[RMDB]
RNA sequence: GGGAACGACUCGAGUAGAGUCGAAAAGAAGAGCCGGGCUAACAAAGGUGGGAGGCACCCAACCCUUCGCAAGAGCCGAGUGGCAAGGCUAAGCGAAACCAAGACAAAAUGGUUAUAAAUAAUGCAACAAUGGCACAAUCUUCGGAUUGUGCCAUUGAAAAGAAACAACAACAACAAC
Reactivity to DMS in 0.01 (KOAc 150mM, MgCl2 10mM, bicine 150mM(pH8.5), 24C), signal-to-noise 1, nucleotides 027 to 126: g000a120a100g010a100g010c020c040g030g000g000c000u010a050a090c150a070a090a190g010g030u000g000g000g040a020g020g000c060a100c060c050c020a040a060c080c010c060u000u000c000g000c040a120a110g000a040g000c010c000g060a070g010u000g000g020c040a040a140g010g010c030u000a090a300g010c040g000a020a020a020c000c030a060a180g000a150c230a070a130a040a060u030g000g010u000u020a140u010a010a020a080u010a090a140u000g020c090a110a170
Chemical mapping of a 177-nucleotide RNA with DMS. For DMS, 519 sequencing reads were counted. For DMS the reverse transcriptase was MarathonRT. The reactions ran in a buffer of 150 mM KOAc, 10 mM MgCl2 and 150 mM bicine (pH 8.5), at 24 C. The data come from the RNA Mapping Database (RMDB), library M2PK90. Reactivities are given for positions 27 through 126.